[RMDB]
RNA sequence: GGGAACGACUCGAGUAGAGUCGAAAAAAAAAGAUAUGGAGGAGAUGGAGAGCCUGAUCCACUCCUAGGUUCGGAAACGAACCUAGCCCGGAUCCUGCUCGUUGAAAUCUCCUCCUAAGUCAAAAAAGGUUUAACAUUAGUUCGCUAAUGUUAAACCAAAAGAAACAACAACAACAAC
Reactivity to DMS in 0.01 (KOAc 150mM, MgCl2 10mM, bicine 150mM(pH8.5), 24C), signal-to-noise 2, nucleotides 027 to 126: a020a050a060a100a050g000a090u000a300u000g000g000a000g000g000a040g000a000u010g010g020a150g020a010g000c020c110u000g000a010u000c000c000a120c170u010c300c000u000a000g020g000u000u000c000g010g000a110a090a120c010g010a000a000c010c000u000a000g000c300c230c190g000g020a010u000c010c070u000g020c020u010c000g020u020u000g000a100a120a050u000c020u000c010c000u000c010c010u000a010a060g000u050c020a000a010a150a070a090a120